An RNA of 207 nucleotides, treated with 2A3 and read out base by base. Conditions: 150 mM KOAc, 10 mM MgCl2 and 150 mM bicine (pH 8.5), 24 C. For 2A3 the reverse transcriptase was SuperScript II with manganese. Source: RMDB library ARCHII, as collected in RNAgym.
[RMDB]
RNA sequence: GGGAACGACUCGAGUAGAGUCGAAAAUGGGAGCCGGUGCUGUUCACAGACUAGAUGGCGACGGGUCGUGCACAUUGCAGCGGCUCAAGAUAUAGUCGGUCCACCUUCGGGUGAGCUAGCCCAAGCCUUCUCGCAUGAGUAUUCACCGUUCCGUAGGCUCUAUCUCUUCCUUCGGGAAGAGAUAGAGAAAAGAAACAACAACAACAAC
Reactivity to 2A3 in 0.01 (KOAc 150mM, MgCl2 10mM, bicine 150mM(pH8.5), 24C), signal-to-noise 2, nucleotides 027 to 156: u190g000g030g030a010g030c050c030g150g080u020g000c020u010g000u030u010c010a060c030a080g020a040c010u060a030g030a170u090g080g060c090g030a050c010g030g020g010u020c000g010u010g030c030a040c030a100u070u300g010c050a090g070c000g000g000c000u000c020a010a000g020a010u100a040u070a140g040u130c020g040g010u060c020c020a030c000c000u040u080c070g030g000g010u010g040a030g000c000u030a020g020c010c010c030a020a000g020c010c000u040u020c000u010c010g040c060a100u100g010a030g050u080a090u070u160c070a050c050c010g040u070u010c000c000g000u030a030g100g000